This 177-nucleotide RNA was probed chemically with DMS and 2A3. The reactions ran in a buffer of 150 mM KOAc, 10 mM MgCl2 and 150 mM bicine (pH 8.5), at 24 C. 2A3 adducts were read by reverse transcription with SuperScript II with manganese. For DMS, 8,477 sequencing reads were counted. The 2A3 profile rests on 16,791 reads. For DMS the reverse transcriptase was MarathonRT.
RNA sequence: GGGAACGACUCGAGUAGAGUCGAAAAAGCGUCGACGAACCUUCCAACCUUCCAUAGCAGCAAAAGCUGAACCUUCCAACCUUCCAAUCUACUCGAGAGGAGGAGGAGGAGGAGGAGGAGGAAUUAAACUAUGUAUCUUGUUCGCAAGAUACAUAGUAAAAGAAACAACAACAACAAC
Reactivity to DMS in 0.01 (KOAc 150mM, MgCl2 10mM, bicine 150mM(pH8.5), 24C), signal-to-noise 7, nucleotides 027 to 126: a070g010c080g020u000c040g020a100c070g010a100a100c070c020u000u010c020c020a110a120c060c020u000u010c020c040a090u010a120g010c020a040g010c070a060a070a070a090g000c010u000g000a070a160c030c010u000u000c000c010a090a090c070c020u010u000c020c010a120a180u000c010u000a030c060u000c020g000a010g010a250g000g000a110g010g010a100g000g000a120g000g020a140g000g000a120g000g000a140g000g010a170g010g010a300a080u000u000a030a060
Reactivity to 2A3 in 0.01 (KOAc 150mM, MgCl2 10mM, bicine 150mM(pH8.5), 24C), signal-to-noise 7, nucleotides 027 to 126: a000g050c030g060u030c020g030a100c030g010a070a070c010c000u040u010c010c020a100a090c020c010u070u000c020c020a120u070a140g030c020a010g000c010a110a080a230a070g010c020u030g020a080a070c000c010u040u000c020c030a080a090c020c020u080u000c000c010a030a060u010c010u050a060c030u030c060g020a030g000a020g050g030a030g020g020a040g020g040a050g000g000a070g020g060a040g020g040a040g010g040a030g020g030a020a010u160u130a090a070